Background: This 170-nucleotide RNA was probed chemically with 2A3 and DMS. For DMS, 45,204 sequencing reads were counted. For 2A3 the reverse transcriptase was SuperScript II with manganese. DMS adducts were read by reverse transcription with MarathonRT. Reactivities are rounded to 0.1 and cut off at 0 and 3. DMS (dimethyl sulfate) methylates the pairing face of unpaired adenines and cytosines.
RNA sequence: GGGAACGACUCGAGUAGAGUCGAAAAUUAGACACACUACUUGCUUCUUCUAGUCUUAGAACCUUUGUUGUAGAUAAGUCUUUGUCAAUUGAGGAGUUUGCUGACGUAGUAAAGGAACAAGUCUCAGAAAUCUAGUGGUUCGCCACUAGAAAAAGAAACAACAACAACAAC
Reactivity to 2A3 in 0.01 (KOAc 150mM, MgCl2 10mM, bicine 150mM(pH8.5), 24C), signal-to-noise 9, nucleotides 027 to 129: u090u050a030g050a020c010a000c000a010c110u070a010c010u040u030g040c010u020u030c000u070u030c020u070a010g040u000c010u040u090a060g020a100a090c010c000u010u030u050g040u010u020g030u070a030g020a090u090a080a100g050u030c000u030u100u090g100u050c030a030a080u030u090g030a040g010g030a080g070u030u060u060g110c080u040g030a030c040g020u010a000g010u030a040a100a020g030g010a060a000c010a050a010g070u000c030u020c030a040g070a060a120a060
Reactivity to DMS in 0.01 (KOAc 150mM, MgCl2 10mM, bicine 150mM(pH8.5), 24C), signal-to-noise 9, nucleotides 027 to 129: u030u040a110g000a090c130a100c160a160c050u000a030c000u000u010g000c070u030u020c040u020u020c000u030a020g020u030c040u020u070a090g020a070a090c030c000u000u020u040g020u020u020g000u000a100g000a100u030a030a050g000u020c080u010u010u010g000u030c010a050a070u000u000g020a080g000g030a110g010u030u010u020g030c050u040g000a070c130g000u010a040g020u000a000a030a030g000g010a030a040c070a040a070g020u010c050u000c040a070g030a050a050a030